[RMDB]
RNA sequence: GGGAACGACUCGAGUAGAGUCGAAAAUUAAAACUGUGUUCAUAUGACCACACAUAGGAACUGUCAAGGAAGAUACCAAAGGACGAACUCUUCUUAAGGUAAAAGACAACAUAAAGCUAUGCAUCAACAAGCUGCAACAAGCUCCCGCUGCCAAGGAUAGCGGGAAAAUAUUCGUAUUUUCCCGCUAAAAAGAAACAACAACAACAAC
Reactivity to 2A3 in 0.01 (KOAc 150mM, MgCl2 10mM, bicine 150mM(pH8.5), 24C), signal-to-noise 2, nucleotides 027 to 156: u070u020a040a020a010a050c050u060g000u000g040u050u030c020a030u100a040u080g030a030c020c000a040c000a020c000a030u070a010g030g000a030a040c040u050g010u070c050a040a030g060g000a010a000g000a050u090a020c020c010a000a070a040g050g030a010c010g040a080a050c030u000c020u070u000c000u050u060a110a020g040g000u040a050a070a000a000g050a020c040a070a000c010a070u160a090a100a000g000c010u020a050u130g050c010a030u030c030a030a110c020a120a010g020c030u040g040c030a040a020c020a060a000g000c000u030c020c020c000g020c030u080g000c000c000a020a010g000g040a030
Reactivity to DMS in 0.01 (KOAc 150mM, MgCl2 10mM, bicine 150mM(pH8.5), 24C), signal-to-noise 2, nucleotides 027 to 156: u000u000a070a090a150a140c010u000g030u000g010u020u020c010a080u010a100u020g010a240c070c050a090c010a060c020a070u000a080g030g020a040a110c060u000g000u010c090a120a110g000g010a040a050g040a120u000a100c040c030a050a100a170g010g000a080c060g000a120a090c080u000c030u000u010c030u010u010a100a060g010g000u010a060a070a050a160g010a100c010a030a040c070a060u000a040a040a130g000c030u010a130u000g000c020a060u010c090a080a160c030a110a090g020c040u000g010c030a060a080c080a070a090g000c010u000c050c020c000g000c030u010g000c030c000a000a180g000g030a260
An RNA of 207 nucleotides, treated with 2A3 and DMS and read out base by base.
The RNA was probed in 150 mM KOAc, 10 mM MgCl2 and 150 mM bicine (pH 8.5) at 24 C.
For 2A3, 961 sequencing reads were counted.